[RMDB]
RNA sequence: GGGAACGACUCGAGUAGAGUCGAAAAAAAAGGUGUAGAAUAGGUGGGAGGGGCAACCCGACGGUGAAAUACCACCCCUUUUGGCGUUACUUUGCUAACUUGGAAUAACAGUACCUUCUAGUUUAGGCUGUACCUGUAGGUUCGCCUACAGGUACAGAAAAGAAACAACAACAACAAC
Reactivity to DMS in 0.01 (KOAc 150mM, MgCl2 10mM, bicine 150mM(pH8.5), 24C), signal-to-noise 1, nucleotides 027 to 126: a030a050a020a010g020g020u000g000u040a030g000a180a060u000a030g000g020u000g020g010g000a030g000g010g010g010c250a040a000c010c010c000g030a090c230g000g010u010g000a050a020a030u010a080c020c030a140c020c000c000c010u000u000u000u000g000g000c060g000u020u010a070c050u000u000u000g040c060u000a060a010c130u000u000g000g000a180a080u000a080a110c150a080g000u000a090c080c020u000u010c070u010a060g000u000u000u000a070g030g010